[RMDB]
RNA sequence: GGGAACGACUCGAGUAGAGUCGAAAAAAUAAGAGUUUGGAUUAACCUAUAGGGAAUUAGCGAUCAAGAAUACAACCUAAGGACCUGGAUGACUUAAUUAUUCCAUAGGUUGGUGGAAGCUAGCGAAUCCUUCAGCAUUUUUCGAAAUGCUGAAGGAAAAAGAAACAACAACAACAAC
Reactivity to DMS in 0.01 (KOAc 150mM, MgCl2 10mM, bicine 150mM(pH8.5), 24C), signal-to-noise 1, nucleotides 027 to 126: a080a080u000a020a040g020a180g010u000u010u000g000g000a100u000u000a070a080c020c010u010a120u000a260g010g000g030a030a030u000u000a010g000c050g010a070u000c110a050a110g010a030a120u010a110c060a070a050c030c060u040a130a060g000g000a020c130c080u000g010g020a080u000g000a060c050u000u000a030a050u000u000a020u000u010c000c010a030u000a000g000g010u000u000g000g030u000g010g000a030a100g010c080u010a030g030c070g020a100a120